[RMDB]
RNA sequence: GGGAACGACUCGAGUAGAGUCGAAAAGAUAUGGAUCCAUGGACAUGAAGUGUCUCGUUCGGAAACGAACGGGAUGUUUCAACAGCCCGCUGGAUCCUAAGUCAAAAGUGGCGGUUCGCCGCCACAAGCGUAAAGUACUGUUCGCAGUACUUUACGCAAAAGAAACAACAACAACAAC
Reactivity to DMS in 0.01 (KOAc 150mM, MgCl2 10mM, bicine 150mM(pH8.5), 24C), signal-to-noise 3, nucleotides 027 to 126: g000a010u000a300u000g020g010a000u000c000c000a040u010g010g020a010c040a280u010g010a010a010g020u000g020u010c000u000c000g010u010u010c000g020g000a090a120a150c010g000a020a000c000g000g010g010a000u000g010u000u000u000c010a030a080c270a190g000c010c010c010g020c190u010g030g000a000u000c000c000u010a030a080g000u000c060a060a040a100a070g010u000g000g010c000g000g030u000u010c160g000c000c000g020c000c000a000c010a020a040
Reactivity to 2A3 in 0.01 (KOAc 150mM, MgCl2 10mM, bicine 150mM(pH8.5), 24C), signal-to-noise 1, nucleotides 027 to 126: g020a010u070a020u120g000g010a000u010c010c020a040u210g040g000a060c030a160u110g000a020a020g000u020g030u010c000u010c010g000u010u000c010g020g020a060a120a080c000g000a000a000c000g000g000g000a010u000g000u020u000u000c010a040a030c040a020g030c010c000c020g070c070u010g000g000a000u000c000c000u000a040a020g040u030c010a000a000a040a210g000u000g010g000c010g030g040u040u110c300g020c110c000g000c000c000a000c000a000a010
Chemical mapping of a 177-nucleotide RNA with DMS and 2A3. The RNA was probed in 150 mM KOAc, 10 mM MgCl2 and 150 mM bicine (pH 8.5) at 24 C. For DMS the reverse transcriptase was MarathonRT.